[RMDB]
RNA sequence: GGGAACGACUCGAGUAGAGUCGAAAAUGCCAAAGAUGGGGUGAGGGGAGGGUAGCUGCCCAGUUUGCUCAUGGCCUGCUCUCAUCUCUGCCUCCAGCCUUGCCCUUUAAGGUGGUGGUGAUCUCAGCCAUCCUGGCCCUGGUGGUGCUCACCAUCAAGUUAAGUACGACUUCGGUCGUACUUAACUAAAAGAAACAACAACAACAAC
Reactivity to 2A3 in 0.01 (KOAc 150mM, MgCl2 10mM, bicine 150mM(pH8.5), 24C), signal-to-noise 1, nucleotides 027 to 156: u160g000c030c090a100a120a000g090a080u100g000g000g020g000u030g050a000g000g050g040g000a050g000g000g000u000a000g040c140u150g010c030c010c010a120g000u090u110u220g120c100u070c050a100u130g030g000c000c000u020g010c000u030c010u000c000a050u050c040u000c010u010g060c030c050u060c000c000a030g020c030c000u050u100g010c020c000c040u010u100u060a100a010g110g010u100g000g020u000g000g020u030g120a090u020c040u000c100a040g020c000c000a000u030c000c000u010g070g030c020c000c000u010g010g010u000g000g030u060g020c020u020c010a000c000c000a010u010c020a000